[RMDB]
RNA sequence: GGGAACGACUCGAGUAGAGUCGAAAACCUCUCCAAGCAUGGAGUUGGAUCACGUGGCUUAGUCGAAAGACCUGGGUUGCUUGAUUCCUAAAGUGGGGUGGACUGCGUGAGGCUGGUUUCACAGAGCAACGAACAGCUUCCGCUCUGUGCAGUGGAAGCCAUACAUAUACUUCGGUAUAUGUAUGGCAAAAGAAACAACAACAACAAC
Reactivity to DMS in 0.01 (KOAc 150mM, MgCl2 10mM, bicine 150mM(pH8.5), 24C), signal-to-noise 3, nucleotides 027 to 156: c010c040u000c030u000c010c020a110a210g040c080a140u010g010g000a070g040u000u010g010g010a060u000c050a050c070g020u000g020g020c020u000u000a080g010u010c030g020a150a100a190g000a040c090c020u020g000g000g010u000u000g010c000u000u000g010a040u000u000c010c050u000a000a100a150g010u000g010g030g020g000u010g020g020a060c050u010g010c040g010u000g020a070g040g020c020u010g010g000u000u000u000c010a160c020a070g000a070g020c030a110a110c050g020a050a090c020a200g020c110u000u000c020c040g020c000u000c010u010g010u000g020c040a100g010u000g020g020a090a200
Reactivity to 2A3 in 0.01 (KOAc 150mM, MgCl2 10mM, bicine 150mM(pH8.5), 24C), signal-to-noise 7, nucleotides 027 to 156: c000c010u040c020u000c000c010a060a090g030c030a090u080g010g000a010g030u080u190g060g000a030u030c030a010c050g020u040g030g000c020u060u080a020g000u020c020g050a120a060a020g020a030c020c080u030g010g000g010u020u010g010c020u020u030g010a060u150u170c000c010u130a150a100a040g060u120g020g010g020g000u050g020g030a050c030u040g030c020g040u060g020a030g040g000c010u020g050g000u060u110u080c040a040c010a030g070a010g040c020a030a060c040g050a060a040c030a040g000c000u070u010c020c030g000c010u000c010u010g010u010g020c040a060g040u030g040g030a060a010